[RMDB]
RNA sequence: GGGAACGACUCGAGUAGAGUCGAAAAUACGCGAGGUUCGCCUCGCGUAAAAGAGCAGCGUAAACGUGAGCGUACGUAGUGCUGUACAUCGUUCCUACACGAAUGCACAUGGUUUCGACCAUGUGAAGUGCCAAGCAAGGUUCGCCUUGCUUGGCACAAAAGAAACAACAACAACAAC
Reactivity to DMS in 0.01 (KOAc 150mM, MgCl2 10mM, bicine 150mM(pH8.5), 24C), signal-to-noise 2, nucleotides 027 to 126: u000a000c000g000c020g000a000g010g000u000u000c210g030c000c000u000c000g000c010g020u000a000a020a120a090g010a280g000c010a020g000c010g020u000a020a100a040c010g060u000g000a190g040c300g030u030a020c000g000u000a100g000u000g000c000u020g000u000a120c130a180u000c030g000u000u000c000c000u000a110c300a090c210g000a120a030u020g000c000a020c000a030u030g000g000u000u010u050c180g000a010c010c020a000u000g000u000g000a030a080
Reactivity to 2A3 in 0.01 (KOAc 150mM, MgCl2 10mM, bicine 150mM(pH8.5), 24C), signal-to-noise 3, nucleotides 027 to 126: u040a000c000g000c000g000a000g000g060u050u060c110g100c100c000u000c000g000c000g000u000a000a000a000a010g060a010g000c010a000g000c020g150u180a210a150a060c020g000u040g050a070g220c080g140u110a000c000g000u030a000g030u030g080c000u010g000u010a030c020a060u060c020g000u000u030c010c000u010a010c080a020c030g190a170a070u240g020c010a000c000a000u000g020g010u040u070u120c180g090a020c030c000a020u010g000u010g010a000a010